Chemical mapping of a 177-nucleotide RNA with 2A3 and DMS.
The RNA was probed in 150 mM KOAc, 10 mM MgCl2 and 150 mM bicine (pH 8.5) at 24 C.
Source: RMDB libraries RFM100 and RFMREP, as collected in RNAgym.
RNA sequence: GGGAACGACUCGAGUAGAGUCGAAAAACUUAUAAGACGAGUACAACGUAUGGUACAUCACAUGUAUCUUAUUAGUUUUUAAGUACCUCGUGUACAUAGACUUAUGAGACGAGUACAUCGUAUGGUAAAAUUCUCUCAAUUUCGAUUGAGAGAAUUUAAAAGAAACAACAACAACAAC
Reactivity to 2A3 in 0.01 (KOAc 150mM, MgCl2 10mM, bicine 150mM(pH8.5), 24C), signal-to-noise 9, nucleotides 027 to 126: a000c030u040u030a040u020a060a030g040a010c040g010a000g040u010a010c030a240a050c130g080u090a080u190g030g000u020a040c050a130u070c040a060c020a130u160g080u170a070u010c000u020u030a040u010u040a020g010u000u000u000u020u100a130a060g020u030a030c010c010u050c060g080u110g030u070a010c010a010u110a020g130a070c030u110u020a020u070g060a050g010a030c020g000a010g040u030a010c020a090u080c070g020u050a050u120g020g020u090a040
Reactivity to DMS in 0.01 (KOAc 150mM, MgCl2 10mM, bicine 150mM(pH8.5), 24C), signal-to-noise 9, nucleotides 027 to 126: a050c010u000u000a020u010a050a030g010a030c070g010a130g010u000a010c010a040a140c070g010u010a040u020g000g020u000a010c010a090u020c140a110c180a290u020g010u020a120u000c020u010u000a030u010u000a020g000u000u000u000u010u010a070a150g020u000a050c030c010u010c120g000u010g020u020a020c010a040u000a070g000a090c110u000u000a020u010g000a130g000a050c020g000a170g010u000a030c020a040u010c030g010u000a030u020g000g010u010a030
For DMS the reverse transcriptase was MarathonRT. For 2A3 the reverse transcriptase was SuperScript II with manganese.